[RMDB]
RNA sequence: GGGAACGACUCGAGUAGAGUCGAAAAGAUAUGGAUUACCAAUUCGCGUUGCAUGGUGAGGGAUUUCGGAAACGAAAUCCUCCCCACCACCAUGCAACGAACUACGAAUACUGGUAAUCCUAAGUCAUCAGACAAGUACGUUCGCGUACUUGUCUGAAAAAGAAACAACAACAACAAC
Reactivity to DMS in 0.01 (KOAc 150mM, MgCl2 10mM, bicine 150mM(pH8.5), 24C), signal-to-noise 1, nucleotides 027 to 126: g010a000u000a130u010g000g000a040u010u010a010c000c010a110a060u000u000c000g000c020g040u000u000g000c000a000u000g000g000u030g000a290g000g020g000a010u000u000u000c000g000g000a000a010a010c000g030a000a000a030u000c030c020u000c000c010c010c020a300c040c020a030c000c040a000u030g000c000a000a000c000g010a030a000c120u010a300c000g000a040a030u000a130c200u000g000g000u000a030a020u000c000c000u000a000a030g000u000c020a070

The record gives the reactivity of an RNA of 177 nucleotides to DMS. The reactions ran in a buffer of 150 mM KOAc, 10 mM MgCl2 and 150 mM bicine (pH 8.5), at 24 C.